Conditions: 150 mM KOAc, 10 mM MgCl2 and 150 mM bicine (pH 8.5), 24 C. This 207-nucleotide RNA was probed chemically with 2A3. It was measured as part of the RMDB library VIROID. The 2A3 profile rests on 558 reads.
RNA sequence: GGGAACGACUCGAGUAGAGUCGAAAACGAGCGAGGCGGAGAUCGAGAGACAGUUCGUGCGCGGCGACCUGAAGUUGCUUCGGCUUCUACUUGUUCUCUUCCUGCGUGGAACGGCUCCUUCUUCACACCAGCCGGAGUUGGAAACUACGCGGUGGAUAGGAAGGAGGUAGUUCGCUACCUCCUUCCUAAAAGAAACAACAACAACAAC
Reactivity to 2A3 in 0.01 (KOAc 150mM, MgCl2 10mM, bicine 150mM(pH8.5), 24C), signal-to-noise 1, nucleotides 027 to 156: c040g000a040g070c050g010a040g090g090c070g060g000a090g010a110u040c040g000a030g000a000g030a140c000a070g130u080u120c040g000u120g010c080g030c040g110g030c040g130a000c060c070u060g020a090a060g010u040u050g050c020u040u000c000g010g000c000u220u080c040u150a140c020u030u010g000u080u000c020u000c000u000u040c000c000u020g000c000g000u010g000g050a030a030c010g000g000c000u000c040c000u140u210c020u110u150c020a090c020a090c190c080a030g050c030c020g000g020a050g040u020u050g040g060a060a000a040c010u020a000c000g000c010g050g110u070g070g010a100u050